[RMDB]
Chemical mapping of a 177-nucleotide RNA with DMS and 2A3. The reactions ran in a buffer of 150 mM KOAc, 10 mM MgCl2 and 150 mM bicine (pH 8.5), at 24 C. DMS adducts were read by reverse transcription with MarathonRT.

RNA sequence: GGGAACGACUCGAGUAGAGUCGAAAAGAGGAUCGGCUGGGAAGAGUAUAUCCUAUGGGAAUCCGUGGUUUCCCCUCACGUCCAGCCCCUCCCCGGUUCUGGCGAAGGGGGACUCCGGAACACCUUGCAUCGAUAAAUUGUUCGCAAUUUAUCGAUGAAAAGAAACAACAACAACAAC
Reactivity to DMS in 0.01 (KOAc 150mM, MgCl2 10mM, bicine 150mM(pH8.5), 24C), signal-to-noise 4, nucleotides 027 to 126: g020a130g010g000a090u010c050g020g020c060u020g020g000g010a100a080g000a040g010u010a110u000a070u000c030c030u000a060u010g010g000g010a170a210u010c020c010g020u000g000g000u000u010u010c000c000c010c020u010c070a080c040g000u010c010c020a000g020c300c030c000c060u020c050c030c040c100g010g000u000u000c010u000g000g000c030g000a300a010g000g000g010g000g010a050c000u000c180c010g010g000a020a070c160a210c030c010u000u020g010
Reactivity to 2A3 in 0.01 (KOAc 150mM, MgCl2 10mM, bicine 150mM(pH8.5), 24C), signal-to-noise 3, nucleotides 027 to 126: g110a030g080g000a060u040c050g010g000c030u020g030g050g020a090a000g030a030g070u060a070u030a030u180c020c020u070a130u130g040g000g030a060a130u000c000c000g010u030g010g030u010u120u250c030c000c010c000u020c000a190c020g090u060c000c010a000g000c040c000c000c000u110c030c020c010c020g010g000u070u050c010u010g010g010c010g030a040a020g000g000g000g000g010a000c000u000c010c000g000g010a020a030c040a050c070c000u010u070g030